[RMDB]
RNA sequence: GGGAACGACUCGAGUAGAGUCGAAAAGAUAUGGACGAAGAACGACGAACUACCACGGUAGUCGGAAACGACUACUAGUGGCGUCGGGAGUCCUAAGUCAAAAGAUGCAGCGUUCGCGCUGCAUCAACGCUCACUUUAAGUUCGCUUAAAGUGAGCGAAAAGAAACAACAACAACAAC
Reactivity to 2A3 in 0.01 (KOAc 150mM, MgCl2 10mM, bicine 150mM(pH8.5), 24C), signal-to-noise 2, nucleotides 027 to 126: g060a000u080a050u100g010g000a010c030g120a190a200g040a250a030c000g040a000c010g020a090a130c120u220a070c160c010a010c000g010g000u000a010g020u030c020g000g010a010a010a010c000g000a010c000u000a010c010u080a160g000u020g000g000c010g000u020c000g000g020g020a030g000u050c000c010u020a080a020g090u050c060a000a030a050a160g010a000u000g020c010a000g000c010g070u120u170c250g040c000g000c140u000g030c000a000u000c010a000a000
Reactivity to DMS in 0.01 (KOAc 150mM, MgCl2 10mM, bicine 150mM(pH8.5), 24C), signal-to-noise 2, nucleotides 027 to 126: g020a060u000a300u010g000g000a000c000g020a190a110g030a110a240c000g000a040c020g000a070a060c100u020a300c060c000a000c010g000g010u000a000g010u020c000g000g000a030a030a100c010g010a010c000u000a030c000u000a060g020u000g000g040c030g030u010c000g000g000g020a200g000u000c000c000u000a030a140g020u000c030a120a060a120a150g000a040u000g000c000a000g000c010g030u000u000c300g010c010g000c000u000g030c000a000u000c000a020a070

Overview: An RNA of 177 nucleotides, treated with 2A3 and DMS and read out base by base. DMS adducts were read by reverse transcription with MarathonRT. Reactivities are given for positions 27 through 126.